[RMDB]
RNA sequence: GGGAACGACUCGAGUAGAGUCGAAAACCCUCUGCCCCUAUUAUUCACUUAAGGGCUUCCCGAUGGUUAAAUUGGUCCAGGGACCACUGUCUCUUUUUUUAAUCUUUGAAUACAGCUGUGCGAGGGCUAACCUCACACUAUUCGUAGUGUGAGGUUAAAAAGAAACAACAACAACAAC
Reactivity to DMS in 0.01 (KOAc 150mM, MgCl2 10mM, bicine 150mM(pH8.5), 24C), signal-to-noise 2, nucleotides 027 to 126: c010c000c030u000c090u010g020c010c000c010c030u010a070u010u000a070u000u010c110a090c120u010u010a150a100g000g000g020c050u010u000c020c010c010g020a090u010g000g000u000u000a010a060a090u000u010g000g010u020c080c110a090g000g000g000a060c150c100a060c140u000g000u000c000u000c000u000u000u010u010u000u020u000a020a040u000c030u000u010u010g000a050a060u010a040c160a050g010c070u000g000u000g010c040g010a080g010g000g020c120
Reactivity to 2A3 in 0.01 (KOAc 150mM, MgCl2 10mM, bicine 150mM(pH8.5), 24C), signal-to-noise 1, nucleotides 027 to 126: c010c010c010u000c050u070g010c030c010c000c010u030a070u210u010a040u180u170c050a000c040u020u090a030a050g020g050g020c030u070u020c020c000c000g080a180u150g010g020u060u140a120a140a160u040u050g080g010u100c060c030a000g120g000g000a000c020c020a070c050u020g050u030c020u050c000u200u120u110u050u060u020u110a040a120u040c000u010u140u110g020a040a010u060a040c030a070g030c000u030g000u050g150c070g000a070g000g040g020c030